[RMDB]
RNA sequence: GGGAACGACUCGAGUAGAGUCGAAAAGAUCUGCGCCGAUCCGAAACGCUAGCAAACAGCCCGCAUCAUGUCGUCUCCUAACUACGACGUGGUGAAAUACUGAGCUUAUGCGAGUAAGCCUGUUAGCAAUAGAUCAGAACGUUCGCGUUCUGAUCAACAGUGCAUAUCGAUUCGUCGAUAUGCACUGAAAAGAAACAACAACAACAAC
Reactivity to 2A3 in 0.01 (KOAc 150mM, MgCl2 10mM, bicine 150mM(pH8.5), 24C), signal-to-noise 7, nucleotides 027 to 156: g020a050u030c020u080g030c050g010c060c050g040a060u020c040c050g070a060a050a030c060g010c050u060a010g040c030a070a050a100c050a070g040c020c000c010g020c010a010u000c000a000u010g010u000c000g000u000c050u080c100c070u110a110a100c050u020a000c010g000a000c010g000u000g000g010u020g040a040a010a000u160a030c040u040g020a020g010c000u020u020a020u080g100c030g020a040g060u020a020a000g010c000c040u050g020u030u050a020g020c060a090a130u060a200g000a000u000c000a000g000a000a000c010g010u060u050c200g000c000g130u000u010c010u000g000a000u010c000a000a000
Reactivity to DMS in 0.01 (KOAc 150mM, MgCl2 10mM, bicine 150mM(pH8.5), 24C), signal-to-noise 2, nucleotides 027 to 156: g020a050u000c010u000g000c110g020c080c050g000a060u020c000c020g010a120a100a070c080g000c030u000a060g070c030a070a080a190c110a130g010c000c000c020g010c030a010u000c020a030u050g000u000c000g000u000c110u000c300c060u000a070a040c020u020a060c020g030a010c020g060u010g010g010u010g000a030a070a110u000a110c050u010g010a060g030c000u000u010a190u000g020c210g020a180g030u010a050a090g000c020c040u010g010u010u010a070g040c040a050a180u000a120g000a020u000c010a000g000a040a020c010g010u000u000c250g040c050g010u000u000c000u000g010a000u000c000a030a080
This 207-nucleotide RNA was probed chemically with 2A3 and DMS.
The 2A3 profile rests on 7,906 reads.
The RNA was probed in 150 mM KOAc, 10 mM MgCl2 and 150 mM bicine (pH 8.5) at 24 C.
Source: RMDB library M2RFPK, as collected in RNAgym.